RNA sequence: GGGAACGACUCGAGUAGAGUCGAAAAUUCAGUAUCGCGUCUGGAUCAAGUCGCAUAGCGGAUUUAAUCGCGUCAACCCAGCCAUCGACGGAAUCCCUGACUGCCGUCUGUAUUGCGCCGGGAAUGCAGUAAUGCUUUCGUUCGCGAAAGCAUUACUAAAAGAAACAACAACAACAAC
Reactivity to DMS in 0.01 (KOAc 150mM, MgCl2 10mM, bicine 150mM(pH8.5), 24C), signal-to-noise 2, nucleotides 027 to 126: u010u010c030a020g010u000a060u000c150g030c050g010u000c020u010g010g040a110u010c190a090a090g020u010c010g020c040a060u010a100g020c100g010g010a070u000u000u010a090a110u000c050g020c050g040u000c090a070a110c020c000c000a090g010c000c020a010u000c130g000a040c030g000g020a120a100u000c030c050c050u010g020a060c110u000g000c020c020g010u000c000u020g020u010a070u000u000g050c170g050c020c020g000g010g000a060a020u010g000c050
Reactivity to 2A3 in 0.01 (KOAc 150mM, MgCl2 10mM, bicine 150mM(pH8.5), 24C), signal-to-noise 1, nucleotides 027 to 126: u040u020c010a000g050u020a070u140c100g010c020g030u000c010u050g080g020a130u030c040a030a040g000u000c000g000c100a040u050a060g060c070g000g030a010u080u090u140a100a020u130c040g010c000g060u040c050a070a100c010c000c000a000g010c010c000a020u020c000g020a000c000g030g020a000a050u060c040c010c010u040g050a030c030u060g060c000c000g000u040c060u060g030u050a100u010u210g000c080g000c030c000g000g000g020a010a010u090g010c010
Structure probing data (DMS and 2A3) for a 177-nucleotide construct. Reactivities are rounded to 0.1 and cut off at 0 and 3. The DMS profile rests on 1,639 reads. The reactions ran in a buffer of 150 mM KOAc, 10 mM MgCl2 and 150 mM bicine (pH 8.5), at 24 C. Source: RMDB library OK2TST, as collected in RNAgym. For 2A3, 1,499 sequencing reads were counted.